RNA sequence: GGGAACGACUCGAGUAGAGUCGAAAACCGGGACGAGGAGGGGCGACGACGAGCUGCGAGCAAAGAUGUGCCCCGGGACCCCCGGCACCUUCCAGUGGAUUUCCUUGCGGAAAGGAUGUUGGCGGUCGUGUGUAUUAGACUUCGGUCUAAUACACACAAAAGAAACAACAACAACAAC
Reactivity to DMS in 0.01 (KOAc 150mM, MgCl2 10mM, bicine 150mM(pH8.5), 24C), signal-to-noise 1, nucleotides 027 to 126: c010c010g000g020g000a100c060g010a160g030g000a150g000g050g000g000c030g000a120c080g000a100c140g010a300g010c050u040g000c180g030a170g060c050a030a070a160g010a050u000g000u000g010c000c010c010c040g040g000g000a050c010c010c100c000c010g010g050c000a030c000c010u000u020c010c000a130g020u000g020g000a250u010u000u030c050c030u000u000g010c140g000g000a020a000a040g000g000a080u000g080u000u010g010g050c300g000g020u000c030
The record gives the reactivity of an RNA of 177 nucleotides to DMS. The RNA was probed in 150 mM KOAc, 10 mM MgCl2 and 150 mM bicine (pH 8.5) at 24 C. The DMS profile rests on 676 reads.